Chemical mapping of a 177-nucleotide RNA with DMS and 2A3. The data come from the RNA Mapping Database (RMDB), library M2PK50.

RNA sequence: GGGAACGACUCGAGUAGAGUCGAAAACGACUGCGUUUCGACGCAGUCGAACAUUAUGUGGUGAAAUAUAAAAGCCGAAAUUCCGAUACGAUAUAAUUUAAAUUACCUACGAGUUCGCUCGUAGGAACAAUUGUACAGACUUCGGUCUGUACAAUUGAAAAGAAACAACAACAACAAC
Reactivity to DMS in 0.01 (KOAc 150mM, MgCl2 10mM, bicine 150mM(pH8.5), 24C), signal-to-noise 3, nucleotides 027 to 126: c010g020a020c000u000g010c000g010u000u000u000c180g040a060c010g030c000a010g010u010c000g030a050a050c100a120u000u000a040u010g010u000g010g020u000g020a160a120a070u010a100u020a070a070a100a300g000c020c020g010a020a080a130u000u000c010c010g020a100u000a060c080g000a060u000a050u010a070a050u020u000u010a060a090a110u000u000a120c000c010u000a010c000g010a000g010u000u010c200g010c000u000c000g000u000a000g010g010a080a040
Reactivity to 2A3 in 0.01 (KOAc 150mM, MgCl2 10mM, bicine 150mM(pH8.5), 24C), signal-to-noise 4, nucleotides 027 to 126: c010g000a000c000u000g000c000g020u010u040u120c150g030a030c000g010c000a000g010u000c000g000a000a000c000a050u250u300a090u130g070u120g010g040u040g070a060a250a040u260a030u050a080a140a020a020g000c010c000g020a050a050a040u050u000c010c020g060a070u040a170c040g000a010u040a050u050a280a170u150u130u200a100a190a120u150u110a130c010c000u000a000c000g010a000g020u030u050c190g080c070u000c000g010u000a000g000g000a000a000
Conditions: 150 mM KOAc, 10 mM MgCl2 and 150 mM bicine (pH 8.5), 24 C. 2A3 is a SHAPE reagent: it acylates the 2'-hydroxyl of flexible nucleotides of all four kinds. 2A3 adducts were read by reverse transcription with SuperScript II with manganese.